Source: RMDB library TTRDEL, as collected in RNAgym.
An RNA of 177 nucleotides, treated with DMS and 2A3 and read out base by base.
DMS adducts were read by reverse transcription with MarathonRT.

RNA sequence: GGGAACGACUCGAGUAGAGUCGAAAAGAUAUGGACCCAGCUUUUGACGCAGUGUGAUCGGAAACGAUCAUACACUGCGAUAAGCUGGUCCUAAGUCAAAACAGAGGAGGGUUCGCCCUCCUCUGAAGAUCUAUUUAGCCUUCGGGCUAAAUAGAUCAAAAGAAACAACAACAACAAC
Reactivity to DMS in 0.01 (KOAc 150mM, MgCl2 10mM, bicine 150mM(pH8.5), 24C), signal-to-noise 4, nucleotides 027 to 126: g010a040u000a300u010g000g000a020c130c050c060a000g000c000u000u000u000u000g020a150c100g010c000a010g020u000g010u010g010a020u010c000g010g000a140a110a200c000g020a000u000c000a080u010a120c040a030c040u000g030c000g040a050u000a020a010g010c000u000g010g000u000c010c010u000a020a120g010u010c020a050a060a150a230c010a010g000a010g010g000a020g000g010g020u000u010c270g010c000c000c000u000c000c000u000c000u000g000a030a050
Reactivity to 2A3 in 0.01 (KOAc 150mM, MgCl2 10mM, bicine 150mM(pH8.5), 24C), signal-to-noise 3, nucleotides 027 to 126: g010a020u070a040u150g010g010a000c090c110c060a010g010c010u110u090u090u200g280a150c050g000c000a000g000u010g000u010g000a010u010c010g030g000a050a000a050c020g000a010u000c000a000u110a020c010a010c010u000g000c020g000a000u010a010a000g000c000u000g020g000u000c000c000u020a040a030g040u020c020a010a010a130a160c000a000g000a000g020g010a000g000g050g040u080u250c270g180c000c010c020u000c000c000u000c000u000g000a000a010

In probing experiments dimethyl sulfate is read out at A N1 and C N3, which are open when not base-paired.